[RMDB]
RNA sequence: GGGAACGACUCGAGUAGAGUCGAAAAUAAGAGCAUGUACGAAUCACGAUAAGAGAGUUCCUGGUGAAUCCCGGGUACAAGGAAAGGUAUUAAUCUCCCACUGCGUUCCCUUGCAGUAGGGAUAUAAGAAAUAGAACUGUUUCGACAGUUCUAUUUCAAAAGAAACAACAACAACAAC
Reactivity to 2A3 in 0.01 (KOAc 150mM, MgCl2 10mM, bicine 150mM(pH8.5), 24C), signal-to-noise 4, nucleotides 027 to 126: u160a030a030g050a020g040c070a060u100g040u110a020c050g060a110a050u070c050a020c090g080a070u130a290a070g060a000g020a020g050u030u030c000c020u020g000g050u060g070a090a050u070c010c010c020g020g010g020u060a050c040a040a020g050g040a110a070a020g060g000u070a070u090u120a140a070u050c030u010c030c010c000a010c000u000g000c000g050u030u040c020c000c000u020u050g000c000a000g010u090a120g000g010g000a000u020a000u000a010a020
Reactivity to DMS in 0.01 (KOAc 150mM, MgCl2 10mM, bicine 150mM(pH8.5), 24C), signal-to-noise 5, nucleotides 027 to 126: u010a080a080g000a070g000c070a050u000g020u000a060c050g000a090a080u000c050a060c080g010a140u010a080a090g000a110g010a220g000u000u000c000c010u000g010g030u010g010a100a090u000c090c020c020g000g000g000u000a040c050a090a060g010g010a050a060a050g000g010u000a050u010u010a060a070u000c120u010c000c000c000a040c010u000g000c000g010u010u010c020c020c020u000u000g000c010a010g010u000a080g020g000g000a020u000a020u000a070a150